RNA sequence: GGGAACGACUCGAGUAGAGUCGAAAACAACCAUGGCGACGGCAAAAUCAUUAGGCUAAUAACGCUUAUUUGCAUUCUUAUCAUGCCGGCAGCUCGCCCUUAAAUACUGUUUCCACUACUGCUCCUUAUAAGGACAUUAGUUCGCUAAUGUCCUUAUAAAAGAAACAACAACAACAAC
Reactivity to DMS in 0.01 (KOAc 150mM, MgCl2 10mM, bicine 150mM(pH8.5), 24C), signal-to-noise 4, nucleotides 027 to 126: c090a120a120c090c060a100u010g000g010c020g010a080c040g010g000c030a070a080a070a060u000c070a060u000u000a020g020g010c020u000a090a090u010a100a110c220g000c030u000u000a020u020u010u000g020c120a090u010u000c090u020u000a060u010c150a060u000g020c030c020g000g000c070a080g000c160u000c090g000c020c010c120u000u020a080a060a090u000a070c110u000g000u000u000u000c040c030a080c110u000a070c110u000g000c040u000c020c030u000u000
Reactivity to 2A3 in 0.01 (KOAc 150mM, MgCl2 10mM, bicine 150mM(pH8.5), 24C), signal-to-noise 2, nucleotides 027 to 126: c020a020a010c020c020a070u090g020g000c010g000a050c030g000g010c020a030a000a080a050u030c010a030u010u050a000g010g020c000u040a120a230u120a280a070c060g040c040u030u060a080u050u100u030g040c040a030u040u050c020u140u150a200u210c020a020u070g000c000c000g030g020c000a020g040c020u020c030g000c000c000c020u130u160a040a120a040u150a120c040u040g040u040u030u040c010c020a030c040u080a030c030u060g040c000u020c010c000u000u060